[RMDB]
RNA sequence: GGGAACGACUCGAGUAGAGUCGAAAAAAACUUUUGUGACUAGCUGAAACGGGACUAAUCUCCUCACCGAGGCUAAGCAAGUAAAAUACGCCUCUCAUAUCCUUACCUGAGGGUGGUAAGGAAAUAACCUGCAACGCUUCCUUCGGGAAGCGUUGAACUUCGUUAGUACCUUCGGGUACUAACGAAGAAAAGAAACAACAACAACAAC
Reactivity to 2A3 in 0.01 (KOAc 150mM, MgCl2 10mM, bicine 150mM(pH8.5), 24C), signal-to-noise 1, nucleotides 027 to 156: a000a000a000c100u080u040u150u220g060u050g000a020c030u050a000g040c020u040g020a040a030a030c030g000g010g000a010c060u070a110a170u080c030u010c040c050u080c030a110c040c040g010a000g000g000c010u020a020a050g070c010a080a000g030u200a050a020a020a070u040a010c120g040c040c010u080c000u000c030a020u020a050u260c000c010u000u000a010c020c000u050g050a080g010g010g010u000g000g000u010a000a000g000g130a010a010a010u020a030a040c050c000u120g000c000a000a000c000g010c000u010u020c020c000u030u050c110g050g000g000a000a020g000c020g000u000u000g000a000a000